This 177-nucleotide RNA was probed chemically with DMS and 2A3. For 2A3, 1,337 sequencing reads were counted. 2A3 adducts were read by reverse transcription with SuperScript II with manganese. The reactions ran in a buffer of 150 mM KOAc, 10 mM MgCl2 and 150 mM bicine (pH 8.5), at 24 C. For DMS the reverse transcriptase was MarathonRT.
[RMDB]
RNA sequence: GGGAACGACUCGAGUAGAGUCGAAAAGUCAUGGCAAUUUGGGGUACAGUAACAUGCUAAGUGUUUAUUCACAUCAGUGUGAAGCCAGCAAAUAAUGAGGCCUUACCCCUAGGGGACAUUAAACCUAACACUGCAUGGGAUUCGUCCCAUGCAGUGUAAAAGAAACAACAACAACAAC
Reactivity to DMS in 0.01 (KOAc 150mM, MgCl2 10mM, bicine 150mM(pH8.5), 24C), signal-to-noise 2, nucleotides 027 to 126: g020u000c060a080u010g000g000c150a050a120u010u010u000g020g010g020g000u000a040c240a040g010u000a010a040c020a050u000g000c200u000a060a110g020u000g000u000u000u010a030u010u000c000a010c020a020u000c300a120g030u010g030u000g000a020a010g000c020c010a150g060c100a070a080a110u000a040a080u000g000a240g000g010c000c020u000u000a040c010c000c000c030u000a060g000g000g010g000a040c110a040u000u000a040a070a110c060c050u010a060
Reactivity to 2A3 in 0.01 (KOAc 150mM, MgCl2 10mM, bicine 150mM(pH8.5), 24C), signal-to-noise 2, nucleotides 027 to 126: g020u020c030a030u050g070g010c040a020a140u140u060u050g000g000g000g020u020a040c000a120g000u020a050a000c000a020u060g000c060u140a090a130g000u000g050u090u050u070a120u050u000c000a000c030a030u120c120a080g160u010g040u010g140a000a010g010c010c000a100g060c100a210a050a120u240a050a120u240g050a050g060g000c000c010u020u000a000c000c000c000c000u000a020g010g040g000g030a030c000a000u080u140a050a080a040c010c000u030a020
Overview
Reactivities are given for positions 27 through 126.